Source information: This 177-nucleotide RNA was probed chemically with DMS. The reactions ran in a buffer of 150 mM KOAc, 10 mM MgCl2 and 150 mM bicine (pH 8.5), at 24 C. Source: RMDB library OK2TRN, as collected in RNAgym. For DMS, 842 sequencing reads were counted.
RNA sequence: GGGAACGACUCGAGUAGAGUCGAAAAGAGGCAAUCUCACCGGAUGGAGAUCGGCAGUGACCGAGGCAGCCGCUAAGACAGCGGCCGCUACCGGUUCACCGGCUUCUGCCACAAACUUGUCUACCGGAUCACCUCAGGAGUUCGCUCCUGAGGUGAUAAAAGAAACAACAACAACAAC
Reactivity to DMS in 0.01 (KOAc 150mM, MgCl2 10mM, bicine 150mM(pH8.5), 24C), signal-to-noise 2, nucleotides 027 to 126: g020a110g020g000c050a100a080u000c020u000c080a170c180c060g040g000a130u010g020g000a010g000a060u020c070g010g040c090a060g010u000g010a040c000c010g020a270g000g030c030a020g010c010c000g000c020u010a080a130g020a160c290a010g010c030g010g000c000c000g020c000u000a090c190c000g000g000u010u000c050a080c020c010g010g000c030u000u000c020u010g000c020c000a030c220a100a080a070c190u020u010g000u000c030u000a300c020c020g000g000